[RMDB]
RNA sequence: GGGAACGACUCGAGUAGAGUCGAAAAGAUAUGGAAGGCAGGGUUAGUCUCAACAGCUCGGAAACGAGACAUGAGAGACCUGCCUUCCUAAGUCAAAUCGGUUUCACAGUUCGCUGUGAAACCGAAAUCCCUUAAUGAUGUUCGCAUCAUUAAGGGAAAAAGAAACAACAACAACAAC
Reactivity to 2A3 in 0.01 (KOAc 150mM, MgCl2 10mM, bicine 150mM(pH8.5), 24C), signal-to-noise 4, nucleotides 027 to 126: g000a010u080a020u080g000g000a010a000g000g020c030a000g060g000g090u250u230a220g200u060c000u000c000a070a230c050a100g060c010u000c000g030g000a040a030a020c010g010a000g040a040c050a100u130g010a010g010a020g020a010c000c000u000g000c000c000u000u010c000c000u000a000a010g010u000c000a000a030a130u060c000g000g000u000u000u000c000a000c010a020g010u070u130c220g080c160u000g000u000g000a010a000a000c000c000g000a010a000a000
Reactivity to DMS in 0.01 (KOAc 150mM, MgCl2 10mM, bicine 150mM(pH8.5), 24C), signal-to-noise 5, nucleotides 027 to 126: g010a040u000a300u000g000g000a010a010g020g020c000a000g000g010g010u010u000a170g010u000c000u000c000a040a140c300a150g000c000u000c000g000g000a090a080a180c000g000a010g010a030c090a190u000g000a040g010a050g000a060c000c000u000g000c010c000u000u000c000c000u000a010a100g000u010c030a060a100a140u000c010g000g000u000u000u000c000a010c000a000g010u000u010c210g020c000u000g000u000g010a000a010a000c000c000g000a010a020a090
Chemical mapping of a 177-nucleotide RNA with 2A3 and DMS. DMS (dimethyl sulfate) methylates the pairing face of unpaired adenines and cytosines. Source: RMDB library TTRDEL, as collected in RNAgym. For DMS, 6,402 sequencing reads were counted. The RNA was probed in 150 mM KOAc, 10 mM MgCl2 and 150 mM bicine (pH 8.5) at 24 C.